Chemical mapping of a 207-nucleotide RNA with 2A3. For 2A3 the reverse transcriptase was SuperScript II with manganese. Reactivities are given for positions 27 through 156. The RNA was probed in 150 mM KOAc, 10 mM MgCl2 and 150 mM bicine (pH 8.5) at 24 C. The data come from the RNA Mapping Database (RMDB), library RNAMAK.

[RMDB]
RNA sequence: GGGAACGACUCGAGUAGAGUCGAAAAGUGAAGGCUUCGGCCUUCACAAAAAGAUAUGGAACAUGUGAGACUCGAUAAGAACGGUUCGGAAACGAACCCGUGUUCUUUUGACGAGUCCCAUGUUCCUAAGUCAAAAAGUUGUCGUUCGCGACAACAAUCACGUAAGGUUCUUCGGAACCUUACGUGAAAAAGAAACAACAACAACAAC
Reactivity to 2A3 in 0.01 (KOAc 150mM, MgCl2 10mM, bicine 150mM(pH8.5), 24C), signal-to-noise 2, nucleotides 027 to 156: g060u010g000a030a000g030g030c070u080u210c300g110g010c000c060u000u000c000a000c010a000a000a000a000a010g040a020u080a020u020g010g010a000a000c020a000u030g130u080g070a280g020a130c000u000c050g060a080u050a260a000g000a000a000c010g000g020u000u000c020g020g060a090a070a010c010g010a000a000c000c020c010g140u100g070u110u010c000u000u090u050u080g270a160c110g000a000g000u010c010c000c000a000u000g000u000u000c000c000u000a000a000g000u020c010a010a000a000a000a210g010u020u000g020u000c010g060u090u140c230g010c020g160a000c000a010a000c010a000a030